[RMDB]
RNA sequence: GGGAACGACUCGAGUAGAGUCGAAAAGAUAUGGAUUAUUCCAUACUAGACAAUGACGUCGGAAACGAUAAGACAGUCUAAUGGAGAUAAUCCUAAGUCAAAAUCGUUCUCGUUCGCGAGAACGAAAUCCCAAAUAUUUGUUCGCAAAUAUUUGGGAAAAAGAAACAACAACAACAAC
Reactivity to 2A3 in 0.01 (KOAc 150mM, MgCl2 10mM, bicine 150mM(pH8.5), 24C), signal-to-noise 5, nucleotides 027 to 126: g000a020u060a040u170g010g000a000u000u010a020u040u030c000c000a010u020a200c120u030a040g000a000c020a120a300u190g010a050c120g020u010c010g020g010a120a090a040c020g010a010u040a100a070g110a080c060a020g020u000c000u020a030a030u020g010g000a300g020a220u010a010a010u000c000c000u010a120a020g050u030c020a020a010a000a300u040c000g010u010u000c010u000c000g020u030u040c300g010c020g120a010g000a010a000c000g000a030a020a000
Reactivity to DMS in 0.01 (KOAc 150mM, MgCl2 10mM, bicine 150mM(pH8.5), 24C), signal-to-noise 4, nucleotides 027 to 126: g010a050u010a300u010g000g010a020u000u000a000u000u000c000c000a000u000a120c270u000a010g000a030c000a100a110u010g020a160c300g000u000c000g000g000a130a080a140c010g000a010u010a090a120g000a110c160a090g000u000c000u000a010a010u000g000g000a070g000a020u000a010a000u000c010c000u000a060a090g010u000c020a060a040a110a130u000c010g000u000u000c010u000c000g010u000u020c210g040c030g010a000g000a010a000c000g000a010a040a090